Overview: An RNA of 177 nucleotides, treated with 2A3 and DMS and read out base by base. For 2A3, 2,583 sequencing reads were counted. The reactions ran in a buffer of 150 mM KOAc, 10 mM MgCl2 and 150 mM bicine (pH 8.5), at 24 C.

RNA sequence: GGGAACGACUCGAGUAGAGUCGAAAAUUCAGUCUCAGGCUUGUACCAGAUGCCCUGGUAUUCCCAUGAAGGAACUACCCUAGGGAAGUCACUAUGCUGCGUUGGCCCUUGUCUUCCAAGAUUAAACCCUAAUUGGCAUUUUCGAAUGCCAAUUAGGAAAAGAAACAACAACAACAAC
Reactivity to 2A3 in 0.01 (KOAc 150mM, MgCl2 10mM, bicine 150mM(pH8.5), 24C), signal-to-noise 3, nucleotides 027 to 126: u050u010c000a000g090u000c000u010c080a020g040g020c040u070u070g030u070a040c010c010a040g010a250u100g070c020c000c000u000g000g000u030a040u040u060c000c040c000a070u200g090a060a030g040g000a050a020c080u080a060c060c030c040u080a060g030g040g000a010a020g010u010c000a000c100u090a050u230g000c050u000g000c040g120u040u050g030g020c010c000c010u010u050g020u000c020u060u010c040c000a020a020g040a090u090u150a090a090a090c010
Reactivity to DMS in 0.01 (KOAc 150mM, MgCl2 10mM, bicine 150mM(pH8.5), 24C), signal-to-noise 5, nucleotides 027 to 126: u000u000c070a080g010u000c040u010c090a070g010g010c090u000u000g010u000a050c060c030a100g000a100u000g000c130c100c010u010g000g020u000a070u000u000c020c000c030a160u010g020a130a100g000g000a070a050c140u010a070c040c030c190u010a110g010g010g020a080a070g000u010c060a060c110u010a090u010g000c050u000g010c030g020u010u000g010g020c030c030c030u000u000g000u010c030u000u010c070c070a050a120g010a090u010u000a080a120a130c160